[RMDB]
RNA sequence: GGGAACGACUCGAGUAGAGUCGAAAAGAGCUCUAGAUGCGAUUGUUGACUGUAACAGCAUCUGCUAUCAGUCUGAGAUAGCUCAGGAUAGCUGGAGCUAUCUGCAACGGUGCAGACUCCAGUGACACCGUGAACAAUCGUUCAUGUCACAGAGCAGCUAAUGACGGUCAUUCGUGACCGUCAUUAGAAAAGAAACAACAACAACAAC
Reactivity to DMS in 0.01 (KOAc 150mM, MgCl2 10mM, bicine 150mM(pH8.5), 24C), signal-to-noise 2, nucleotides 027 to 156: g010a210g000c010u000c020u000a060g020a100u000g010c020g010a030u030u000g000u010u000g010a020c040u010g020u010a060a060c060a080g020c060a180u010c040u000g010c010u010a040u000c010a080g010u000c090u000g010a110g000a020u000a020g010c030u000c010a100g000g000a150u000a190g030c030u000g000g030a040g020c050u010a050u010c000u000g010c020a090a150c090g000g010u020g010c000a140g000a170c020u030c060c050a110g000u000g010a080c080a050c040c050g030u000g000a040a020c000a040a030u000c030g050u010u000c040a100u040g030u000c020a110c070a060g000a020g030c000a080g000
Reactivity to 2A3 in 0.01 (KOAc 150mM, MgCl2 10mM, bicine 150mM(pH8.5), 24C), signal-to-noise 4, nucleotides 027 to 156: g040a010g010c010u010c010u030a030g000a020u060g020c000g020a020u020u000g020u000u040g040a020c000u000g040u120a130a040c020a090g060c010a160u070c140u120g000c020u020a030u120c010a010g140u020c050u070g040a020g000a090u020a000g020c020u020c030a040g040g060a140u080a120g050c020u040g050g030a010g000c040u030a070u000c000u010g020c020a050a070c100g150g030u080g000c000a020g010a100c030u030c040c010a010g040u020g070a050c010a020c020c070g000u000g040a010a000c010a000a010u020c010g030u090u080c110a090u150g030u050c000a000c030a100g000a010g000c010a000g010